[RMDB]
RNA sequence: GGGAACGACUCGAGUAGAGUCGAAAACUAUACAAUGACUUGACGGGGUCAGCCGAUGAUCAAGUCAGUGUUUUCAUCCACCCAGACAAGUCUGGUACCAAUUUAUCGACCCCGGAGGAAUGAAAGGCCCGAUUUAAAUAUUCGUAUUUAAAUCGGGAAAAGAAACAACAACAACAAC
Reactivity to DMS in 0.01 (KOAc 150mM, MgCl2 10mM, bicine 150mM(pH8.5), 24C), signal-to-noise 4, nucleotides 027 to 126: c040u010a070u040a060c060a060a060u010g000a030c010u000u000g000a080c020g010g010g010g010u010c080a140g000c120c140g000a140u020g010a090u000c020a010a010g000u000c040a030g010u000g000u010u030u000u000c090a090u030c070c050a120c140c000c020a050g000a050c070a100a150g010u000c010u000g010g000u020a070c200c180a090a080u030u000u020a110u030c060g000a030c000c010c000c010g000g010a140g000g000a080a030u000g000a090a090a130g020g030
Reactivity to 2A3 in 0.01 (KOAc 150mM, MgCl2 10mM, bicine 150mM(pH8.5), 24C), signal-to-noise 8, nucleotides 027 to 126: c030u050a030u090a240c050a120a110u070g040a030c000u010u020g030a040c000g010g010g000g050u100c040a100g120c080c040g170a260u220g020a100u070c030a040a020g020u010c010a020g000u010g040u050u050u030u060c050a090u000c020c010a040c030c000c010a010g020a030c040a130a060g080u020c010u030g060g010u040a070c020c040a090a110u080u160u080a140u220c050g020a020c000c000c000c010g020g030a060g030g060a130a090u200g070a240a090a000g060g020